Description:
This 207-nucleotide RNA was probed chemically with 2A3. The 2A3 profile rests on 471 reads. The data come from the RNA Mapping Database (RMDB), library RNAMAK. The reactions ran in a buffer of 150 mM KOAc, 10 mM MgCl2 and 150 mM bicine (pH 8.5), at 24 C.
RNA sequence: GGGAACGACUCGAGUAGAGUCGAAAAUACAUUGUUCGCAAUGUAAAAAAAACCUUUGUGCACCCACGCGAGAGCUUGGAUUUAAUGUGAUCCCAUUGGGAUCCAUUUGUCAGCUCUCGGGUGCACUCUGGUAAAAAGAUAGGUUUCGACCUAUCAAUGACAUGACCAGAUUCGUCUGGUCAUGUCAAAAAGAAACAACAACAACAAC
Reactivity to 2A3 in 0.01 (KOAc 150mM, MgCl2 10mM, bicine 150mM(pH8.5), 24C), signal-to-noise 1, nucleotides 027 to 156: u060a000c000a000u000u020g000u040u030c130g010c120a030a030u060g070u200a000a000a000a090a000a000a090a090c030c000u030u020u020g000u000g000c000a000c010c000c000a030c110g230c280g020a010g000a000g000c130u300u300g080g000a100u170u160u300a020a000u010g100u250g000a000u020c080c010c100a300u300u300g000g010g000a000u030c000c000a000u010u010u040g020u000c000a000g000c000u040c000u000c000g000g030g000u000g040c000a000c000u000c000u000g000g010u040a080a080a000a000a000g020a000u010a000g010g050u060u190u240c170g060a040c000c000u000a000u020c010a000a150